[RMDB]
RNA sequence: GGGAACGACUCGAGUAGAGUCGAAAAGUAUCGGUCUGGCUCAUCCUCAAAAAGGGCGCACUGUCCUGAUUUCUCUUAUCUUCCUAUUCAAAAGAGGUGACUCCUGCACGCUUCCGCCCUCUCGGUAUGGCCCCUAUACCGACGAGGAGUCCGCAAGGAACGUUAAAUGCUUCGGCAUUUAACGUUCAAAAGAAACAACAACAACAAC
Reactivity to 2A3 in 0.01 (KOAc 150mM, MgCl2 10mM, bicine 150mM(pH8.5), 24C), signal-to-noise 3, nucleotides 027 to 156: g070u050a060u120c030g000g050u000c010u010g020g020c000u020c070a080u050c040c050u160c100a060a090a060a050a050g050g020g000c040g020c070a080c160u140g020u060c000c000u020g080a110u040u230u030c040u010c000u060u120a150u150c060u120u030c010c020u090a140u130u170c100a110a060a040a000g050a020g060g030u040g020a040c030u040c040c010u050g010c040a030c070g010c030u090u020c030c010g000c010c000c000u010c000u000c000g000g000u000a020u040g090g020c000c000c010c000u000a010u000a010c000c000g000a010c050g000a010g010g010a020g020u000c020c010g070c060a040a040g140
Reactivity to DMS in 0.01 (KOAc 150mM, MgCl2 10mM, bicine 150mM(pH8.5), 24C), signal-to-noise 1, nucleotides 027 to 156: g000u010a070u010c050g020g000u020c030u000g020g060c000u000c080a110u010c030c020u010c050a110a000a110a160a040g020g000g010c030g000c120a050c080u010g010u000c060c000u020g000a130u000u000u010c030u010c020u010u000a150u000c030u010u000c010c020u000a170u020u010c060a070a070a100a100g000a090g010g000u000g000a100c090u000c010c000u000g010c060a140c140g000c050u000u000c030c020g010c030c010c010u000c010u010c000g000g010u000a060u010g020g000c030c000c050c050u040a300u000a060c020c040g010a030c060g000a060g020g010a130g000u000c030c030g000c130a150a090g010